An RNA of 177 nucleotides, treated with 2A3 and read out base by base. The data come from the RNA Mapping Database (RMDB), library RFM100. For 2A3 the reverse transcriptase was SuperScript II with manganese.
[RMDB]
RNA sequence: GGGAACGACUCGAGUAGAGUCGAAAAGAUUCUGCAGACCGGCUAGGAGCCGCAGGGCGUUCUCCGGGGCGCGGCCCGAGACCGUCGCGUCGUAGACAGCCAGGAGACCCGGGAGCAGAUUCACCGCCCUUUCGUGAUCCUUCGGGAUCACGAAAGGAAAAGAAACAACAACAACAAC
Reactivity to 2A3 in 0.01 (KOAc 150mM, MgCl2 10mM, bicine 150mM(pH8.5), 24C), signal-to-noise 1, nucleotides 027 to 126: g020a010u010u010c000u000g000c000a020g080a300c010c000g020g010c070u140a140g000g130a020g080c010c030g070c110a150g020g030g030c000g000u050u050c000u020c000c000g000g000g000g000c000g000c010g000g000c000c060c000g110a080g060a110c010c050g050u140c000g010c040g240u050c000g000u010a040g020a130c020a020g000c010c000a000g000g020a000g010a050c020c020c000g010g010g010a030g000c020a010g000a000u020u000c050a050c000c000g070c020